[RMDB]
RNA sequence: GGGAACGACUCGAGUAGAGUCGAAAAGGCCGUGUUCGCACGGCCAAAAAAGCGUACUACACGGAGGCUUUGUCAGACUCGUGUCCCAAAUAGGACACAGUCUUGGAUUUAAGCUACCCACCCGUGUAUCGCAAAAACCACCACUUCGGUGGUGGAAUCUAUACAGACGAUUCGUCGUCUGUAUAGAAAAAGAAACAACAACAACAAC
Reactivity to 2A3 in 0.01 (KOAc 150mM, MgCl2 10mM, bicine 150mM(pH8.5), 24C), signal-to-noise 4, nucleotides 027 to 156: g020g010c040c000g000u010g070u030u080c190g030c120a020c010g000g020c010c020a000a010a000a000a010a010g050c060g040u120a100c020u000a000c020a000c000g010g000a010g010g010c000u020u020u010g030u020c000a000g000a000c000u090c180g000u010g000u060c010c020c020a270a300a090u300a080g000g000a000c000a000c000a000g000u000c000u010u080g100g000a010u190u170u120a010a000g000c000u050a120c040c060c030a050c000c000c000g020u000g000u020a070u300c020g000c020a020a080a010a020a000c000c010a000c010c010a000c000u040u100c250g060g000u000g000g000u000g010g000a000a000
Reactivity to DMS in 0.01 (KOAc 150mM, MgCl2 10mM, bicine 150mM(pH8.5), 24C), signal-to-noise 3, nucleotides 027 to 156: g020g040c000c000g070u010g010u010u000c300g020c030a030c000g040g060c010c010a010a010a060a090a020a060g010c030g010u000a090c100u010a020c020a020c010g000g010a280g020g000c010u000u000u000g000u000c000a060g000a020c000u000c170g090u000g020u000c000c000c020a050a140a190u010a060g010g010a010c020a020c000a020g020u000c000u010u000g020g020a030u000u000u000a030a000g030c010u010a070c030c000c040a300c160c000c010g020u000g010u000a010u010c020g000c040a040a080a060a080a090c010c000a010c010c000a040c020u000u000c300g030g020u010g020g010u000g000g010a050a080